Structure probing data (DMS and 2A3) for a 207-nucleotide construct. Reactivities are given for positions 27 through 156. For 2A3, 1,630 sequencing reads were counted.

RNA sequence: GGGAACGACUCGAGUAGAGUCGAAAACAGCGCAGAAAACCAAAGAGCUAAACGACUAUUCUGUUAUGUGCUAUUGGGGUAAGUACCGCGAUCGCGUUUACUUCAUUGAUGGCAUUCGCGGGAAGUGGGAAGCGCCUGAUUUGCGCGUACAGGCUGAUGAAUAGGAGCAUUUCGAUGCUCCUAUUCAAAAAGAAACAACAACAACAAC
Reactivity to DMS in 0.01 (KOAc 150mM, MgCl2 10mM, bicine 150mM(pH8.5), 24C), signal-to-noise 2, nucleotides 027 to 156: c040a070g020c070g000c030a160g000a100a060a110a120c010c040a020a060a140g010a070g000c030u000a030a110a100c060g010a100c080u010a160u000u000c040u000g030u000u000a080u010g020u000g020c020u000a110u010u010g020g020g000g010u010a050a070g000u000a160c040c000g010c040g050a170u000c050g000c010g010u000u010u010a040c060u000u000c100a210u000u010g010a100u040g030g020c020a090u000u000c050g000c020g010g020g010a050a100g040u000g010g000g020a100a110g030c070g010c000c030u020g000a160u000u000u010g010c020g000c040g000u000a110c040a070g040g030c030u020g020a220
Reactivity to 2A3 in 0.01 (KOAc 150mM, MgCl2 10mM, bicine 150mM(pH8.5), 24C), signal-to-noise 3, nucleotides 027 to 156: c060a020g040c020g050c050a030g080a120a160a020a030c030c030a040a090a050g090a020g020c060u070a120a030a010c050g070a030c080u120a140u170u090c050u070g050u100u140a090u070g030u030g010c010u020a020u040u020g030g030g000g020u080a060a010g010u000a030c010c010g000c020g050a070u070c060g000c000g020u060u030u060a060c050u060u100c090a250u100u300g070a060u070g090g000c030a010u000u040c010g000c010g010g000g020a000a060g020u090g000g020g040a060a000g080c050g080c030c010u000g000a040u090u030u220g000c020g000c010g000u000a010c010a010g030g030c020u050g000a090